This 177-nucleotide RNA was probed chemically with DMS and 2A3. DMS adducts were read by reverse transcription with MarathonRT. The 2A3 profile rests on 825 reads.

RNA sequence: GGGAACGACUCGAGUAGAGUCGAAAAAUUGGUCUGUGAUUUAGUGAGCACUCUGACAGCACAAAACCCAGAAUCUCUGAGUCCAGGGACAGUGAUUUUUGGGAGAAGCUUCCUGGAGUAAGAGCAAGAUUUAGGCCUAGUUCGCUAGGCCUAAAUCAAAAGAAACAACAACAACAAC
Reactivity to DMS in 0.01 (KOAc 150mM, MgCl2 10mM, bicine 150mM(pH8.5), 24C), signal-to-noise 2, nucleotides 027 to 126: a110u000u020g000g020u000c000u000g010u010g010a090u000u020u000a090g000u000g010a100g030c080a050c060u000c070u000g000a080c070a030g000c040a060c100a040a030a070a170c020c000c010a120g000a130a050u010c010u010c000u000g000a140g000u010c000c030a010g020g010g000a060c060a070g000u010g000a160u000u000u020u000u000g010g050g000a150g000a090a190g010c060u000u000c010c050u000g020g000a080g000u000a170a010g000a100g040c300a100a040
Reactivity to 2A3 in 0.01 (KOAc 150mM, MgCl2 10mM, bicine 150mM(pH8.5), 24C), signal-to-noise 1, nucleotides 027 to 126: a030u090u060g000g010u070c020u050g050u030g040a150u000u050u280a100g010u040g090a090g010c030a000c050u080c020u040g060a040c030a000g000c030a020c020a070a040a070a090c020c010c000a010g070a090a060u030c020u000c010u090g000a010g110u000c030c000a010g000g000g060a050c010a030g030u020g010a030u050u150u120u150u210g150g000g010a060g040a080a020g000c030u050u030c000c010u010g000g000a000g030u040a030a000g010a000g030c020a030a070